[RMDB]
RNA sequence: GGGAACGACUCGAGUAGAGUCGAAAAGGGAGAGUGGCCUGGGGCGAGGUGGUGUGCGUGGUGCCACGGUGUCGUGGAAGGCACGCGUAGGCCGAGUGUGAGUGGGUGCGCAAGUGGGUGCGCGAAUGACAAGCCGGUAGUUCGCUACCGGCUUGUCAAAAGAAACAACAACAACAAC
Reactivity to 2A3 in 0.01 (KOAc 150mM, MgCl2 10mM, bicine 150mM(pH8.5), 24C), signal-to-noise 1, nucleotides 027 to 126: g040g000g040a020g000a000g000u030g000g000c060c080u040g020g010g000g070c160g030a040g180g010u120g060g000u000g000u000g010c030g050u110g000g070u300g000c040c000a040c000g040g050u300g070u130c020g090u000g000g030a110a080g100g000c000a000c020g080c000g060u080a070g100g000c000c010g020a010g000u070g000u010g030a140g020u090g000g090g030u070g000c040g000c000a000a000g040u100g100g060g000u040g000c040g000c000g070a000a050u220
Structure probing data (2A3) for a 177-nucleotide construct. For 2A3, 401 sequencing reads were counted. It was measured as part of the RMDB library RFM100. Reactivities are given for positions 27 through 126.